[RMDB]
RNA sequence: GGGAACGACUCGAGUAGAGUCGAAAAUCUGCAUCAUACUUUUGCAAGAUAGGUAAGGAACAGAAGUGUUGCAUGUGCAAUAGACGCGCUGCAGCGUACUCUUCACCUCUGCAAUCUUAUGCCUGCUGAAUAUGUCGCUGUUCGCAGCGACAUAUUCAAAAGAAACAACAACAACAAC
Reactivity to 2A3 in 0.01 (KOAc 150mM, MgCl2 10mM, bicine 150mM(pH8.5), 24C), signal-to-noise 1, nucleotides 027 to 126: u000c010u050g010c040a020u050c000a010u020a080c010u000u030u040u050g000c040a110a130g020a150u100a000g060g100u100a090a070g080g010a000a050c060a090g060a230a040g090u010g000u080u030g000c010a050u300g030u000g000c020a000a120u100a300g080a140c040g020c000g000c010u050g000c000a000g010c000g020u040a130c010u010c000u060u040c030a050c000c020u040c010u000g000c000a000a060u000c010u000u010a000u030g000c040c050u010g070c030u030